[RMDB]
RNA sequence: GGGAACGACUCGAGUAGAGUCGAAAAUGUCCAUCUGAAAUUGUGGCAAUUGCAAAACAAGGUCAGGUUGAUGUUCUCAGGGUUGAGUCAAAUCCACCCAUUUUCCACUAGGUGGCAGACCUUGUUAAAAAGUUACGGAAAAGGAAAGAAAGACAAACGAAAAUUUAGGUUUCGACCUAAAUUUUCGAAAAGAAACAACAACAACAAC
Reactivity to DMS in 0.01 (KOAc 150mM, MgCl2 10mM, bicine 150mM(pH8.5), 24C), signal-to-noise 1, nucleotides 027 to 156: u010g010u000c030c050a050u010c000u000g000a120a160a100u000u020g000u000g020g040c060a130a080u000u010g000c050a220a110a090a030c010a050a050g030g050u000c000a040g000g020u000u020g030a110u000g080u000u000c000u000c030a190g020g030g030u030u000g050a170g060u000c080a050a070a130u000c000c000a100c030c010c020a140u000u000u030u000c040c020a160c240u000a110g020g000u000g000g020c100a100g010a060c010c000u000u000g000u000u000a000a060a090a080a160g020u000u000a170c100g020g000a060a010a090a110g000g000a010a130a080g000a030a100a100g000a090c070a020a090a260
Reactivity to 2A3 in 0.01 (KOAc 150mM, MgCl2 10mM, bicine 150mM(pH8.5), 24C), signal-to-noise 2, nucleotides 027 to 156: u090g000u000c000c000a010u000c000u000g020a090a060a080u100u020g020u070g020g000c040a040a240u150u260g060c020a110a180a020a020c010a000a010g020g000u030c010a030g000g030u020u050g050a030u080g000u110u030c080u020c100a070g030g010g050u030u030g010a010g050u080c060a090a090a080u000c000c020a010c010c000c000a000u100u050u040u000c010c000a040c050u050a050g020g070u020g040g020c030a010g000a030c030c000u000u020g000u000u010a030a030a030a000a000g010u050u030a030c050g030g050a070a030a000a000g020g050a060a050a070g040a050a090a000g130a040c170a200a130a000
Conditions: 150 mM KOAc, 10 mM MgCl2 and 150 mM bicine (pH 8.5), 24 C. The record gives the reactivity of an RNA of 207 nucleotides to DMS and 2A3. For DMS, 1,410 sequencing reads were counted. 2A3 adducts were read by reverse transcription with SuperScript II with manganese. DMS adducts were read by reverse transcription with MarathonRT.